[RMDB]
RNA sequence: GGGAACGACUCGAGUAGAGUCGAAAAGAUAUGGAUCCUAAGGGAGACCACUACUCGGAAACGAGUAAGUGGUCGAAGAACUUAGGAGUCCUAAGUCAAAAGCCUUAUUGCUUCGGCAAUAAGGCAACUGUAGUGGAGUGUUCGCACUCCACUACAGAAAAGAAACAACAACAACAAC
Reactivity to DMS in 0.01 (KOAc 150mM, MgCl2 10mM, bicine 150mM(pH8.5), 24C), signal-to-noise 2, nucleotides 027 to 126: g000a010u010a010u020g000g010a130u000c000c000u010a000a020g000g010g000a000g020a000c000c010a010c000u000a010c000u000c000g030g010a010a000a030c010g000a010g020u000a000a060g010u000g020g010u000c000g000a040a080g000a210a200c010u000u000a000g010g000a060g010u020c000c000u000a000a130g030u000c000a080a140a140a120g010c000c010u000u000a010u000u000g000c000u000u030c210g020g000c000a000a010u000a000a000g010g030c010a010a000